Background
The data come from the RNA Mapping Database (RMDB), library TTRDES. Chemical mapping of a 177-nucleotide RNA with 2A3 and DMS. Conditions: 150 mM KOAc, 10 mM MgCl2 and 150 mM bicine (pH 8.5), 24 C. The DMS profile rests on 3,408 reads.
[RMDB]
RNA sequence: GGGAACGACUCGAGUAGAGUCGAAAAGAUAUGGAAGUAUCACGAGGGAGUCUGCCUUCGGAAACGAAGGUGAAGACAUCGAUCUCGUGAGUACUUCCUAAGUCAAACUCGUGCUUCGGCACGAGAACUCAUCUUAACCGUUCGCGGUUAAGAUGAGAAAAGAAACAACAACAACAAC
Reactivity to 2A3 in 0.01 (KOAc 150mM, MgCl2 10mM, bicine 150mM(pH8.5), 24C), signal-to-noise 3, nucleotides 027 to 126: g030a020u050a050u210g010g020a020a000g000u020a020u040c020a000c000g000a010g020g050g010a060g010u000c010u010g030c000c000u010u000c010g010g010a030a010a000c000g000a000a000g010g020u150g150a080a050g010a010c030a030u300c070g020a040u030c000u000c000g030u000g060a010g000u030a000c000u000u000c000c000u000a090a000g000u020c030a020a070a190c010u000c000g010u000g010c010u100u130c300g120g000c020a000c000g010a000g000a010a010
Reactivity to DMS in 0.01 (KOAc 150mM, MgCl2 10mM, bicine 150mM(pH8.5), 24C), signal-to-noise 3, nucleotides 027 to 126: g010a030u000a300u000g010g010a020a020g010u000a030u000c000a000c020g000a020g020g000g010a020g020u000c000u000g000c000c000u000u010c000g010g000a060a100a160c010g010a010a000g000g000u010g010a100a050g000a010c010a300u000c220g010a060u020c010u000c000g030u000g000a010g010u010a010c000u000u010c000c000u000a010a070g000u010c060a150a090a250c030u000c000g010u000g020c000u010u010c300g010g000c000a000c020g010a000g000a030a170